[RMDB]
RNA sequence: GGGAACGACUCGAGUAGAGUCGAAAAGAAAGAGCCUGAAUACGGAGAACCGUAACGCAUGACCGAAUAUUCAGCCCAGUUCACGACGUAAGUCGUGCGCCCGAGUCUGGCUCUGGGCGCUGGGGUCACGUACAUGCGUCAGGCAGGAGCUAGAGAACGGUGACUAAUGAUUCGUCAUUAGUCACCGAAAAGAAACAACAACAACAAC
Reactivity to 2A3 in 0.01 (KOAc 150mM, MgCl2 10mM, bicine 150mM(pH8.5), 24C), signal-to-noise 3, nucleotides 027 to 156: g070a010a100a010g070a020g000c010c000u030g030a100a020u060a010c000g030g020a120g100a300a290c000c010g010u020a000a020c010g000c000a000u000g010a010c000c070g080a160a110u170a130u220u190c000a130g070c010c000c000a030g030u150u180c000a000c000g020a000c000g040u120a060a130g000u000c000g000u010g000c010g000c010c000c000g010a020g060u000c040u070g120g000c000u000c020u000g020g000g020c000g010c000u010g000g010g000g000u050c120a020c090g010u100a080c000a000u000g010c010g030u010c010a000g010g000c010a010g060g000a020g010c020u030a000g000a010g020a150a010
Reactivity to DMS in 0.01 (KOAc 150mM, MgCl2 10mM, bicine 150mM(pH8.5), 24C), signal-to-noise 1, nucleotides 027 to 156: g010a080a190a150g010a180g040c000c030u000g000a080a250u010a060c060g000g000a280g030a120a240c000c010g000u010a080a300c030g000c000a050u010g000a100c010c060g000a130a140u010a180u000u010c030a090g010c100c000c010a070g000u000u010c030a020c000g020a000c000g040u010a190a240g030u000c010g010u000g000c000g000c000c020c010g000a050g000u010c100u010g020g000c000u000c010u010g030g020g000c010g050c000u010g000g000g050g010u000c010a020c050g030u000a080c020a050u000g000c020g040u000c020a140g000g010c030a100g010g000a110g000c060u000a040g010a220g000a110a300
Conditions: 150 mM KOAc, 10 mM MgCl2 and 150 mM bicine (pH 8.5), 24 C. The record gives the reactivity of an RNA of 207 nucleotides to 2A3 and DMS. The DMS profile rests on 1,947 reads. For 2A3 the reverse transcriptase was SuperScript II with manganese. The 2A3 profile rests on 1,606 reads. It was measured as part of the RMDB library OK3TST.